[RMDB]
The record gives the reactivity of an RNA of 207 nucleotides to 2A3 and DMS.
For DMS the reverse transcriptase was MarathonRT.
Conditions: 150 mM KOAc, 10 mM MgCl2 and 150 mM bicine (pH 8.5), 24 C.
RNA sequence: GGGAACGACUCGAGUAGAGUCGAAAAUGGACGGCCAGGGCGCUCUCUACAUGGACAACCUGGGGAAAACCCUCCGCCAUUGCGGGCGUGUUUACCUCAGCGCGGCCCGCAAGGUCUACGGCUCGGAAAACUACGUCCGAAUCAAGAACGAGGACGGCUGAAAUCAGAGAUUCGUCUCUGAUUUCAGAAAAGAAACAACAACAACAAC
Reactivity to 2A3 in 0.01 (KOAc 150mM, MgCl2 10mM, bicine 150mM(pH8.5), 24C), signal-to-noise 2, nucleotides 027 to 156: u070g010g020a040c020g010g030c070c060a010g000g000g030c030g010c030u010c000u000c000u100a200c050a160u300g000g000a030c050a040a070c060c000u000g000g010g000g020a030a000a000a060c010c010c010u020c010c020g030c030c000a130u010u040g000c000g000g000g000c000g000u010g040u020u050u080a130c020c020u070c020a040g020c000g010c010g040g270c010c000c000g020c000a000a010g000g010u000c020u060a020c060g020g000c050u040c030g010g000a030a080a020a060c100u160a040c060g020u000c000c010g010a000a030u100c040a040a050g070a060a040c090g010a020g000g020a040c020g120g000
Reactivity to DMS in 0.01 (KOAc 150mM, MgCl2 10mM, bicine 150mM(pH8.5), 24C), signal-to-noise 1, nucleotides 027 to 156: u010g010g030a060c040g010g020c020c070a030g020g070g020c040g010c220u000c010u000c050u010a120c070a120u030g020g020a160c180a030a190c020c010u000g000g000g020g000a030a030a100a080c000c000c000u010c000c020g000c010c060a120u000u010g010c070g030g000g000c050g020u000g000u010u010u000a120c070c060u010c110a110g010c050g050c020g050g010c040c000c010g060c050a010a040g030g040u000c020u010a020c030g000g000c090u000c080g000g000a040a050a090a080c030u000a080c050g000u020c000c030g000a060a060u000c040a130a190g010a160a000c010g020a300g020g020a040c000g000g030